Source information
This 207-nucleotide RNA was probed chemically with 2A3.
[RMDB]
RNA sequence: GGGAACGACUCGAGUAGAGUCGAAAACCGGUGUGCCCGGUGUGCGACAUGCGGUUCUACGCCAUCCGCGACGUCAUGCAGCAGGUGACCGAACUGUGAGCACCGAGAAGCGAUCCAAGGUCGUCGCCGUCGACACGAGCGACAGCGCCGACUCGCCGAUACACCAGCUGUUCGCAGCUGGUGUAUCAAAAGAAACAACAACAACAAC
Reactivity to 2A3 in 0.01 (KOAc 150mM, MgCl2 10mM, bicine 150mM(pH8.5), 24C), signal-to-noise 1, nucleotides 027 to 156: c010c000g000g030u070g080u060g040c000c000c060g000g030u030g000u010g050c030g030a060c080a060u250g020c060g000g000u010u090c050u130a110c100g070c030c030a070u050c000c020g040c030g020a090c060g000u010c010a020u160g030c010a040g020c000a010g000g150u090g050a020c090c080g030a080a040c030u120g030u030g080a030g000c000a010c020c030g040a020g040a060a000g010c000g040a060u060c050c000a060a140g050g000u020c030g000u000c000g010c000c000g000u030c030g000a030c020a170c250g050a100g000c000g000a000c000a010g000c000g000c020c000g010a010c000u020c140g070c050c100